[RMDB]
RNA sequence: GGGAACGACUCGAGUAGAGUCGAAAAACAGUCAGUACGCUGACUGAGGGAAACGGGCGCCGGGCUUGGGACAAGAGCCAUCCCAAGUCCAAGGCCAAGUAGGCUCUAGUGAUGGUACGCCAUCACAAAAACUGGUCUACCUUCGGGUAGACCAGAAGAUCCACGGUAAGUUCGCUUACCGUGGAUCAAAAGAAACAACAACAACAAC
Reactivity to 2A3 in 0.01 (KOAc 150mM, MgCl2 10mM, bicine 150mM(pH8.5), 24C), signal-to-noise 1, nucleotides 027 to 156: a010c010a000g000u000c010a000g030u070a080c180g050c110u000g010a000c000u000g000a050g010g110g020a150a190a080c180g060g050g020c090g000c160c120g010g000g000c000u000u000g000g000g020a000c010a000a110g000a000g010c000c000a010u000c000c010c000a000a000g010u020c000c000a030a010g020g000c030c010a030a030g060u060a110g010g000c000u000c010u010a070g000u000g000a010u000g000g010u030a040c270g000c020c000a000u010c000a000c020a000a040a000a000a000c000u000g010g000u000c000u000a000c000c010u030u060c120g070g000g030u000a000g000a000c000c000a000g000a020a010